[RMDB]
Structure probing data (DMS) for a 177-nucleotide construct.
RNA sequence: GGGAACGACUCGAGUAGAGUCGAAAAGAUAUGGACCAGGACCUUGAGCAACAGCAGUAAAGAAGCAUAUGCUCGGAAACGAGCAUAUGCUUCUUUACUGACAUGCUCUUGGUCUGGUCCUAAGUCACUAUACGGGAACGUUCGCGUUCCCGUAUAGAAAAGAAACAACAACAACAAC
Reactivity to DMS in 0.01 (KOAc 150mM, MgCl2 10mM, bicine 150mM(pH8.5), 24C), signal-to-noise 1, nucleotides 027 to 126: g020a070u010a300u000g010g000a020c000c000a030g040g000a030c010c010u000u000g010a020g010c000a020a070c300a190g030c000a030g020u000a040a010a000g000a010a020g010c000a000u000a030u000g000c000u000c000g000g020a090a140a220c000g020a010g000c010a010u000a000u000g010c010u020u000c000u000u000u000a000c000u000g000a020c100a130u000g000c000u020c000u000u000g000g000u000c000u000g000g000u000c000c000u000a010a070g030u000c030a220
Background
For DMS the reverse transcriptase was MarathonRT. For DMS, 1,547 sequencing reads were counted.